An RNA of 207 nucleotides, treated with DMS and 2A3 and read out base by base. For 2A3 the reverse transcriptase was SuperScript II with manganese. The reactions ran in a buffer of 150 mM KOAc, 10 mM MgCl2 and 150 mM bicine (pH 8.5), at 24 C.
[RMDB]
RNA sequence: GGGAACGACUCGAGUAGAGUCGAAAAGACGUGGAGGUAUCGCGCCCUCCUUUGCGCGUAAGUACGUCGAAAUUCGGUGCUAUGGAUCGCACCGUUUGAUCCAUUAGAUAUCCGCUUUGUGCCGCGGUUGGGCAUUUACACUUACCCGAAAGGGGAAAGGAUAUCACGUAUUCGUACGUGAUAUCCUAAAAGAAACAACAACAACAAC
Reactivity to DMS in 0.01 (KOAc 150mM, MgCl2 10mM, bicine 150mM(pH8.5), 24C), signal-to-noise 2, nucleotides 027 to 156: g000a070c030g020u000g020g000a120g020g030u000a100u000c030g020c050g030c070c100c060u000c020c060u010u000u000g000c060g020c050g020u000a080a190g020u010a050c070g010u000c070g020a110a080a120u010u020c040g040g010u000g030c020u000a300u000g000g000a090u020c140g010c060a110c040c090g010u000u000u000g000a080u010c000c030a090u000u000a080g020a180u010a040u000c030c020g000c150u000u010u010g020u010g000c020c060g060c020g000g010u000u000g020g010g000c100a060u020u020u000a180c080a080c150u010u000a140c010c010c020g000a080a100a170g040g030g000g000a040a040
Reactivity to 2A3 in 0.01 (KOAc 150mM, MgCl2 10mM, bicine 150mM(pH8.5), 24C), signal-to-noise 2, nucleotides 027 to 156: g000a000c020g010u030g030g070a070g070g050u140a080u180c010g020c010g000c040c000c000u200c000c020u080u110u100g040c030g000c000g040u040a020a030g060u040a040c050g000u020c030g030a060a060a000u060u050c010g000g000u010g020c010u040a010u160g070g020a010u050c040g020c050a060c040c000g030u050u000u090g010a010u000c000c010a040u040u070a060g070a040u080a040u090c010c010g060c110u050u140u220g040u030g000c000c030g080c060g070g000u080u040g040g020g000c000a000u020u040u110a020c050a010c060u090u130a030c010c000c040g060a080a030a020g000g000g000g000a060a030